[RMDB]
RNA sequence: GGGAACGACUCGAGUAGAGUCGAAAAAUUUAAGGGCCAGGACGGUCACCUUUGGGGUGGUGACAAGUGUGAUCACUUGGGUGGUGGCUGUGUUUGCGUGUCUCCCAGGAAUCUCGUUUACCAGAUCCCAUAUGAGGCAUUUCGAUGCCUCAUAUGGAAAAGAAACAACAACAACAAC
Reactivity to DMS in 0.01 (KOAc 150mM, MgCl2 10mM, bicine 150mM(pH8.5), 24C), signal-to-noise 2, nucleotides 027 to 126: a040u050u060u020a100a090g010g010g020c020c030a100g000g000a070c070g020g020u020c050a030c040c000u000u000u040g020g000g030g000u020g020g000u030g000a060c030a050a100g010u030g000u030g020a080u070c020a030c010u000u010g000g010g040u000g000g020u010g010g000c020u010g000u010g000u000u000u000g000c060g010u020g000u010c040u000c000c010c020a090g000g000a090a010u000c060u000c050g010u000u000u000a060c050c020a120g000a080u000c060
Reactivity to 2A3 in 0.01 (KOAc 150mM, MgCl2 10mM, bicine 150mM(pH8.5), 24C), signal-to-noise 6, nucleotides 027 to 126: a000u210u240u170a060a040g020g040g000c030c020a010g050g030a030c030g020g000u010c010a010c010c000u080u100u130g070g020g010g010u100g020g030u040g030a010c010a060a070g110u110g040u070g140a090u190c000a000c000u010u010g090g010g030u060g010g010u020g010g000c020u030g010u020g050u060u040u060g050c040g000u060g040u000c010u000c020c010c010a020g020g070a050a060u030c030u020c050g050u020u060u030a140c020c000a020g010a070u070c000
Chemical mapping of a 177-nucleotide RNA with DMS and 2A3. High 2A3 reactivity points to a flexible backbone, as in loops and unpaired stretches. Conditions: 150 mM KOAc, 10 mM MgCl2 and 150 mM bicine (pH 8.5), 24 C. Reactivities are given for positions 27 through 126.